Conditions: 150 mM KOAc, 10 mM MgCl2 and 150 mM bicine (pH 8.5), 24 C.
The record gives the reactivity of an RNA of 177 nucleotides to 2A3 and DMS.
For DMS, 20,317 sequencing reads were counted.
The 2A3 profile rests on 13,976 reads.
Values cover nucleotides 27 to 126.
Source: RMDB library OK1LIB, as collected in RNAgym.
[RMDB]
RNA sequence: GGGAACGACUCGAGUAGAGUCGAAAAUCUCACGGGGGGCCUAGCCGUGUGCCAUGCAAACUUCUCGCCAAAGUUACCCCUGAGCUUGUAAAGCGGCAUUCGGAUGUAAACCAAGUAUCUCCUAGGGUAAUUACCGAAAGUUCGCUUUCGGUAAUUAAAAAGAAACAACAACAACAAC
Reactivity to 2A3 in 0.01 (KOAc 150mM, MgCl2 10mM, bicine 150mM(pH8.5), 24C), signal-to-noise 9, nucleotides 027 to 126: u020c000u000c000a030c030g010g000g000g000g030g010c010c010u030a020g020c010c020g040u050g020u030g030c010c010a080u120g010c030a050a060a060c030u060u020c030u020c030g030c010c020a090a070a030g030u060u110a140c010c000c000c000u030g040a010g020c030u050u060g050u130a060a080a020g040c020g020g000c010a020u040u050c030g030g020a040u060g070u170a050a050a070c030c020a060a040g040u040a100u020c040u010c010c010u040a050g060g000g030
Reactivity to DMS in 0.01 (KOAc 150mM, MgCl2 10mM, bicine 150mM(pH8.5), 24C), signal-to-noise 7, nucleotides 027 to 126: u010c010u010c010a140c090g010g000g000g010g000g010c090c030u010a090g010c010c020g000u000g010u010g000c030c030a070u020g020c060a050a080a080c080u010u010c020u010c070g010c070c090a090a050a110g020u010u020a160c040c010c030c040u010g020a100g010c070u010u010g010u020a050a060a110g010c040g000g010c040a070u000u010c030g000g000a090u020g000u020a060a110a110c080c040a060a070g010u000a070u010c040u000c020c010u000a070g010g000g020